An RNA of 177 nucleotides, treated with DMS and 2A3 and read out base by base. DMS adducts were read by reverse transcription with MarathonRT. The reactions ran in a buffer of 150 mM KOAc, 10 mM MgCl2 and 150 mM bicine (pH 8.5), at 24 C.
RNA sequence: GGGAACGACUCGAGUAGAGUCGAAAAAGAUGUGAGUUUGCUUGUUCUCCUUCAUUAAAUGUUGUUAAUGGAAAUGUUUUUAAAAUGUUGAAAUAGACAGUGUUUGGGAACAGGACCACAUAAGAGACCAUAGAGUAGCUUUCGAGCUACUCUAUGGAAAAGAAACAACAACAACAAC
Reactivity to DMS in 0.01 (KOAc 150mM, MgCl2 10mM, bicine 150mM(pH8.5), 24C), signal-to-noise 3, nucleotides 027 to 126: a080g000a010u010g010u000g000a140g010u000u010u010g020c020u000u000g000u000u000c000u000c010c160u000u000c120a050u030u010a040a060a120u010g010u010u000g010u010u000a090a040u000g010g030a170a050a040u010g000u000u000u010u010u000a090a050a060a030u010g000u000u000g000a130a090a020u010a250g000a030c020a030g000u000g010u010u010u010g000g000g020a020a020c020a050g000g000a140c010c000a010c030a010u000a070a100g020a220g000a180
Reactivity to 2A3 in 0.01 (KOAc 150mM, MgCl2 10mM, bicine 150mM(pH8.5), 24C), signal-to-noise 3, nucleotides 027 to 126: a000g160a020u060g030u030g080a190g080u100u130u180g150c010u060u060g000u040u020c020u070c010c030u140u070c030a150u060u240a120a100a130u100g010u050u020g030u020u100a040a010u040g010g030a000a000a020u010g010u000u010u020u040u140a180a300a030a000u020g010u020u020g020a040a050a020u040a020g060a000c010a020g010u010g050u020u050u030g010g010g000a000a000c010a000g000g030a000c000c020a010c020a020u050a050a080g060a010g050a040